[RMDB]
RNA sequence: GGGAACGACUCGAGUAGAGUCGAAAAUCAUGCCACCGAGGGUUAGCGGUCAUGGUUAACCAAAUAGGGCAGGUUAUUGCAAAGAGACAUCCGUGUUUAUACCCAAAAUAAUCCGUAGCCAACACAUAAUAUAGCUCCUCUUCGGAGGAGCUAUAUUAAAAGAAACAACAACAACAAC
Reactivity to 2A3 in 0.01 (KOAc 150mM, MgCl2 10mM, bicine 150mM(pH8.5), 24C), signal-to-noise 1, nucleotides 027 to 126: u000c030a010u010g130c140c060a070c060c000g010a170g000g190g050u080u160a030g000c010g000g000u030c000a020u070g050g000u020u000a000a000c060c000a000a030a110u120a050g010g010g000c000a030g000g090u070u000a120u000u170g110c080a170a030a000g040a020g030a050c000a030u010c010c070g000u000g040u020u070u000a160u050a060c000c000c000a090a060a000a050u180a130a040u000c000c010g020u170a040g000c000c120a030a020c070a070c000a080u000
Reactivity to DMS in 0.01 (KOAc 150mM, MgCl2 10mM, bicine 150mM(pH8.5), 24C), signal-to-noise 1, nucleotides 027 to 126: u020c040a060u000g010c080c050a070c030c000g040a060g010g000g010u010u000a130g000c000g000g000u150c020a130u000g000g010u000u000a050a040c030c020a020a030a050u000a200g010g010g000c030a010g010g010u000u000a020u000u040g000c040a080a020a020g020a050g000a000c000a050u030c050c010g030u020g000u030u000u000a050u060a260c030c000c010a080a010a050a050u020a100a100u000c010c000g000u080a000g000c000c010a010a120c160a030c170a150u000

Structure probing data (2A3 and DMS) for a 177-nucleotide construct. DMS adducts were read by reverse transcription with MarathonRT. For 2A3, 471 sequencing reads were counted. It was measured as part of the RMDB library RFM100.